[RMDB]
RNA sequence: GGGAACGACUCGAGUAGAGUCGAAAAGUGGUUGGUGUCGCACAUCACAGGACAAAGCAGAAGUGUAUGCAAGGAGCUUGGAGCAAAGAUUUAAGCCGCUCGCACUUGCCGAUGCGAAUCAUAGCCGAUUUAUGCUGCGCUUCGGCGCAGCAUAAAUAAAAGAAACAACAACAACAAC
Reactivity to 2A3 in 0.01 (KOAc 150mM, MgCl2 10mM, bicine 150mM(pH8.5), 24C), signal-to-noise 1, nucleotides 027 to 126: g010u000g180g100u120u220g040g060u100g040u040c000g000c020a060c000a010u070c000a030c000a100g000g080a070c060a080a300a000g000c000a060g080a300a040g080u140g050u110a030u130g000c000a000a060g100g030a140g010c000u020u020g010g060a040g000c180a150a080a050g000a050u060u100u220a190a000g040c000c000g000c050u000c000g090c010a040c040u000u000g000c100c000g130a060u010g000c030g000a000a010u120c100a280u080a080g000c010c000g000
Reactivity to DMS in 0.01 (KOAc 150mM, MgCl2 10mM, bicine 150mM(pH8.5), 24C), signal-to-noise 1, nucleotides 027 to 126: g030u070g000g020u040u000g020g090u000g000u000c010g050c000a050c090a040u000c000a090c160a110g000g020a090c210a020a180a170g000c090a040g000a070a150g000u030g000u000a050u050g000c000a020a000g060g000a150g020c060u000u040g000g000a090g040c020a140a170a110g010a030u000u000u000a070a140g000c100c070g000c070u000c120g000c050a100c090u030u020g040c030c140g000a120u000g010c010g000a000a040u000c030a060u020a100g000c000c020g000

The record gives the reactivity of an RNA of 177 nucleotides to 2A3 and DMS. DMS adducts were read by reverse transcription with MarathonRT. Values cover nucleotides 27 to 126. For 2A3, 384 sequencing reads were counted. Source: RMDB library OK1LIB, as collected in RNAgym. 2A3 adducts were read by reverse transcription with SuperScript II with manganese. Conditions: 150 mM KOAc, 10 mM MgCl2 and 150 mM bicine (pH 8.5), 24 C.